[RMDB]
RNA sequence: GGGAACGACUCGAGUAGAGUCGAAAAUGGCUCGAACUGACUAGAACGGUUUUAAGAAAAAGUUCUUACCUGGAGUUGCUUACCUGGGUUCCCUGGCAGCGCUGCAACGGAAUCCAGUGCCCACCGGCCAACAUAUUAAGUUCGCUUAAUAUGUUGGAAAAGAAACAACAACAACAAC
Reactivity to DMS in 0.01 (KOAc 150mM, MgCl2 10mM, bicine 150mM(pH8.5), 24C), signal-to-noise 9, nucleotides 027 to 126: u010g000g010c010u010c020g000a060a110c060u000g010a120c150u010a090g010a090a080c030g000g000u000u010u010u000a040a110g010a060a050a070a120a120g000u000u000c010u000u000a060c210c040u000g010g010a070g010u010u000g010c060u000u010a300c200c000u000g000g010g010u000u000c010c000c060u000g010g010c030a060g010c240g010c210u000g000c010a020a040c300g000g000a030a020u000c010c000a010g010u000g010c020c010c010a140c210c150g010g000
Reactivity to 2A3 in 0.01 (KOAc 150mM, MgCl2 10mM, bicine 150mM(pH8.5), 24C), signal-to-noise 6, nucleotides 027 to 126: u100g010g000c010u010c010g020a060a040c040u050g080a050c050u090a070g040a210a030c020g030g040u040u050u100u210a130a090g130a050a070a030a040a050g030u030u000c000u010u020a030c000c020u040g100g010a030g020u030u030g020c040u100u110a050c010c000u000g000g010g010u000u010c010c000c010u020g120g000c040a070g080c160g120c300u070g000c010a030a010c010g010g000a000a000u000c000c000a010g010u020g050c010c000c010a030c040c020g060g020